Chemical mapping of a 207-nucleotide RNA with 2A3.
The RNA was probed in 150 mM KOAc, 10 mM MgCl2 and 150 mM bicine (pH 8.5) at 24 C.
The 2A3 profile rests on 908 reads.
Values cover nucleotides 27 to 156.

[RMDB]
RNA sequence: GGGAACGACUCGAGUAGAGUCGAAAAGAUUCCUCGUUGUUGAGCGAGGUUUAAACAAAUCGACCACACAAACGUAGCGCCGACUACGGAUUUAUAAAUUAAGGCAUUAAGUGUGAUAAGGAGACAAAAAACGAUGUUGUGUUCGCACAACAUCGAAGCCUUUGAUCUUGUUCGCAAGAUCAAAGGCAAAAGAAACAACAACAACAAC
Reactivity to 2A3 in 0.01 (KOAc 150mM, MgCl2 10mM, bicine 150mM(pH8.5), 24C), signal-to-noise 2, nucleotides 027 to 156: g060a130u150u120c000c000u010c000g000u000u010g000u070u020g000a000g000c010g000a000g000g000u130u120u010a010a010a000c020a000a000a000u000c000g000a000c010c010a000c000a000c000a000a100a000c000g010u000a000g010c020g000c030c000g050a040c000u000a000c000g000g000a010u010u300u010a180u230a090a010a000u080u060a000a000g000g000c000a000u190u280a130a120g000u000g000u050g030a000u010a010a090g130g030a050g010a060c200a060a080a000a060a040a000c010g000a000u000g000u000u000g000u000g000u030u040c160g050c030a000c020a000a000c000a000u000c000g000a040a000